[RMDB]
RNA sequence: GGGAACGACUCGAGUAGAGUCGAAAAGGGGUCUUCUUCUUCUCUCACACAUUGUGCUGAUGUGAUUCUCAUGACUCUUGCUUGGAGAGAUCUGGACGAGGAGUUGGGGGAACCUCUGACCUUGCCCGUCUCUUUAACUGUUCGCAGUUAAAGAGACAAAAGAAACAACAACAACAAC
Reactivity to DMS in 0.01 (KOAc 150mM, MgCl2 10mM, bicine 150mM(pH8.5), 24C), signal-to-noise 3, nucleotides 027 to 126: g010g010g000g020u010c050u000u010c010u000u000c010u000u000c000u010c010u000c070a300c040a030c060a050u010u000g020u000g030c240u010g000a060u010g020u010g010a140u010u000c040u030c030a120u010g010a070c000u000c010u010u000g020c170u010u010g010g020a060g000a070g010a060u000c010u010g000g000a140c280g010a040g000g000a010g000u000u010g000g010g010g010g010a040a030c010c000u000c010u000g000a100c080c070u010u010g000c030c010c030
Reactivity to 2A3 in 0.01 (KOAc 150mM, MgCl2 10mM, bicine 150mM(pH8.5), 24C), signal-to-noise 3, nucleotides 027 to 126: g010g000g000g020u020c040u030u010c000u010u010c000u050u000c010u020c000u030c010a040c000a000c000a080u050u130g100u150g180c180u150g020a100u030g030u000g050a100u150u010c040u010c030a080u180g010a020c020u030c000u010u030g110c110u060u100g130g010a070g000a020g010a180u010c010u020g050g000a030c050g020a050g050g010a000g000u070u050g010g000g010g000g000a040a050c010c010u020c000u000g020a020c000c000u000u110g040c020c010c020